The record gives the reactivity of an RNA of 177 nucleotides to 2A3.
The RNA was probed in 150 mM KOAc, 10 mM MgCl2 and 150 mM bicine (pH 8.5) at 24 C.
Values cover nucleotides 27 to 126.
RNA sequence: GGGAACGACUCGAGUAGAGUCGAAAAACUACUUACCGGAGCUUCCAAAAGAUGUAUUGCAUGAGAUUAUAUCGAUCAUGAUUACUCGAUGUGUUACGAUGUCUGGAUUUCCUGAAGACCUUGCUGCCCAACCCGCUGUCUUCGGACAGCGGGUUGGAAAAGAAACAACAACAACAAC
Reactivity to 2A3 in 0.01 (KOAc 150mM, MgCl2 10mM, bicine 150mM(pH8.5), 24C), signal-to-noise 1, nucleotides 027 to 126: a000c030u090a000c000u040u020a240c040c000g000g000a040g060c100u030u030c040c000a170a120a120a050g110a030u190g000u020a020u090u000g000c000a000u000g000a010g000a010u050u130a070u110a000u160c130g110a090u140c080a080u150g000a070u010u080a000c000u020c030g110a090u040g000u000g010u010u000a030c130g040a000u120g030u000c060u000g060g060a110u040u000u000c000c000u030g040a100a000g000a000c020c010u040u060g000c070u000g010c070